Notes: Chemical mapping of a 177-nucleotide RNA with 2A3 and DMS. Conditions: 150 mM KOAc, 10 mM MgCl2 and 150 mM bicine (pH 8.5), 24 C. The 2A3 profile rests on 2,085 reads.

RNA sequence: GGGAACGACUCGAGUAGAGUCGAAAAUGAUGUUAUGAUAUGGACCGAGCCUGAUGACCGUUGAAAGGAAUCGGAAACGAUUCCUGGAGGUCUGACAGGCGUUUGACGUCCUAAGUCGCGUAAGAAACAGUAGGAGAUUCUUCGGAAUCUCCUACUGAAAAGAAACAACAACAACAAC
Reactivity to 2A3 in 0.01 (KOAc 150mM, MgCl2 10mM, bicine 150mM(pH8.5), 24C), signal-to-noise 2, nucleotides 027 to 126: u160g110a060u170g020u300u180a190u300g010a050u040a030u130g010g000a010c050c020g090a070g010c000c000u060g020a080u170g010a040c050c030g220u300u050g000a030a000a000g010g000a000a000u010c000g000g000a010a020a010c000g000a020u000u000c000c000u000g000g010a000g000g000u010c010u010g030a030c000a000g020g010c000g000u000u050u110g000a000c010g010u000c000c000u010a070a020g000u010c030g030c060g200u130a160a040g030a210a140a010
Reactivity to DMS in 0.01 (KOAc 150mM, MgCl2 10mM, bicine 150mM(pH8.5), 24C), signal-to-noise 4, nucleotides 027 to 126: u010g010a100u010g010u010u000a090u010g010a030u000a240u010g000g000a020c000c100g000a160g010c000c000u000g000a200u010g010a000c010c000g000u010u000g000a180a130a010g000g000a010a000u000c000g010g000a060a030a100c010g010a010u000u000c000c000u000g000g000a020g020g000u000c000u000g020a170c300a010g010g010c010g010u000u010u010g020a180c250g010u000c000c000u000a010a090g010u000c010g010c180g010u010a070a090g000a150a120a140